[RMDB]
RNA sequence: GGGAACGACUCGAGUAGAGUCGAAAAUUGUCGUUGAACGUGCGGUCGCAAUCCUUACACAGGUACCGUUGAUACUCUCGAUAGCUGCCGUGUUUGAUUACCGACUCAGACUGGCAGCGCGGGCAACAGAGGCCCUCUCGCCAGCGAACCUGCUCCACUUAUAAAUGCUGUUCGCAGCAUUUAUAAGAAAAGAAACAACAACAACAAC
Reactivity to DMS in 0.01 (KOAc 150mM, MgCl2 10mM, bicine 150mM(pH8.5), 24C), signal-to-noise 2, nucleotides 027 to 156: u000u000g000u000c010g010u010u010g030a070a090c080g010u010g020c060g030g040u000c030g000c040a080a080u000c030c040u010u010a100c090a070c070a040g000g010u010a060c030c010g000u000u000g020a150u000a000c070u030c040u010c020g030a160u000a110g010c000u010g020c000c000g000u000g020u000u010u020g000a070u010u000a300c110c120g000a090c230u010c020a030g010a040c030u000g010g000c000a020g010c020g000c060g000g020g030c020a060a180c000a120g020a180g000g010c020c020c020u010c030u000c030g010c050c030a070g010c010g020a020a040c030c010u010g010c020u000c030c050a230
Reactivity to 2A3 in 0.01 (KOAc 150mM, MgCl2 10mM, bicine 150mM(pH8.5), 24C), signal-to-noise 5, nucleotides 027 to 156: u080u050g050u020c030g010u010u030g030a100a060c050g000u060g030c030g020g010u030c010g000c100a040a140u120c020c010u100u130a080c110a020c040a070g050g010u070a090c040c000g010u010u020g020a080u080a190c050u040c010u010c070g080a090u080a110g010c010u000g000c000c020g130u060g020u050u000u000g060a070u070u150a160c040c090g060a060c040u010c010a000g010a040c000u010g000g000c000a000g000c000g000c000g000g010g030c010a070a020c040a100g060a060g050g030c020c040c010u020c010u010c030g050c010c010a020g000c020g030a030a080c010c030u060g030c030u020c030c000a050